[RMDB]
RNA sequence: GGGAACGACUCGAGUAGAGUCGAAAAGAUGGGUCCGAUGGAUUAAUGCGUCGCCCGCCAUUGGAUCCUGAUUGAUAGAUUGACGGCGACGGUCGGAUCACUCGGUAAUUCGGUGCUCUACGAGUGAUCCGUGAUGAUAGUUAAGAUGAGCACCUAAACGACGUAUAAAUUUCGAUUUAUACGUCGUAAAAGAAACAACAACAACAAC
Reactivity to DMS in 0.01 (KOAc 150mM, MgCl2 10mM, bicine 150mM(pH8.5), 24C), signal-to-noise 1, nucleotides 027 to 156: g030a080u000g000g030g010u010c000c020g000a080u010g000g000a110u000u010a060a070u020g010c030g040u000c040g010c010c010c050g000c000c000a010u020u020g030g010a030u000c010c020u000g000a090u000u010g010a160u000a120g000a230u020u000g010a160c060g020g030c030g040a040c040g010g000u010c010g020g000a020u000c000a010c000u000c000g010g020u000a050a110u000u030c040g020g030u000g010c050u000c010u000a080c030g010a070g010u010g000a010u000c000c000g010u000g000a050u010g000a150u000a120g000u000u000a070a170g000a130u010g010a060g010c010a040c000c010u010a050a110
Reactivity to 2A3 in 0.01 (KOAc 150mM, MgCl2 10mM, bicine 150mM(pH8.5), 24C), signal-to-noise 6, nucleotides 027 to 156: g080a030u130g000g010g000u000c000c000g000a000u010g020g020a040u090u230a220a090u300g070c000g000u000c000g000c010c010c000g000c030c000a000u000u000g010g000a000u010c000c010u020g040a070u070u150g050a050u040a190g160a100u020u140g040a060c070g000g000c000g000a000c000g000g000u030c000g000g000a000u000c000a000c000u000c000g030g060u100a130a100u190u210c080g000g000u000g000c000u000c000u000a010c000g000a000g000u000g000a000u000c000c000g000u000g020a030u050g000a010u040a150g150u270u160a100a040g040a100u110g000a000g000c000a000c000c000u000a000a010